The data come from the RNA Mapping Database (RMDB), library M2RFOK. Chemical mapping of a 207-nucleotide RNA with DMS and 2A3.

[RMDB]
RNA sequence: GGGAACGACUCGAGUAGAGUCGAAAACAUCUUUCCUCCCUACACAGUGACUCCAGCUUGGGCGGGGCAGGGCUAGGCUGAGCCAGCACUCCCUGUGGUGUCUGCCUGCCACGUGCAGCUCUGGAGUAAAACCUGGAGAAGUUCGCUUCUCCAGGAACUCAAUACUAUCGUUCGCGAUAGUAUUGAGAAAAGAAACAACAACAACAAC
Reactivity to DMS in 0.01 (KOAc 150mM, MgCl2 10mM, bicine 150mM(pH8.5), 24C), signal-to-noise 1, nucleotides 027 to 156: c060a110u000c130u000u000u020c060c060u000c040c010c020u010a160c110a150c080a110g000u000g010a080c000u000c000c020a030g030c120u010u000g000g000g010c020g000g020g000g030c060a010g020g030g000c080u020a020g030g020c060u010g010a240g040c000c010a190g020c060a080c010u000c010c060c070u020g000u000g020g010u000g010u000c050u030g020c000c010u010g000c000c000a030c040g000u000g000c040a080g000c010u000c040u000g080g000a110g000u010a010a030a090a080c010c010u000g000g000a040g020a030a020g010u020u010c300g000c010u010u000c000u000c010c000a010g010g010a000a040
Reactivity to 2A3 in 0.01 (KOAc 150mM, MgCl2 10mM, bicine 150mM(pH8.5), 24C), signal-to-noise 4, nucleotides 027 to 156: c040a130u090c040u130u120u070c020c020u090c010c000c030u170a090c120a020c000a110g110u090g140a020c000u000c010c010a020g000c050u100u100g010g060g000c000g000g000g010g010c000a000g030g060g060c060u190a020g040g000c020u080g040a030g100c010c010a050g040c050a030c060u110c020c040c010u070g030u100g020g050u040g020u020c020u040g020c000c000u010g010c000c000a010c010g040u100g140c010a010g000c010u010c020u100g000g010a000g000u020a000a000a000a010c000c000u000g010g000a000g010a010a000g010u050u210c180g020c130u000u000c000u000c000c000a000g000g000a000a000
Description
2A3 is a SHAPE reagent: it acylates the 2'-hydroxyl of flexible nucleotides of all four kinds. For 2A3, 2,447 sequencing reads were counted. Conditions: 150 mM KOAc, 10 mM MgCl2 and 150 mM bicine (pH 8.5), 24 C.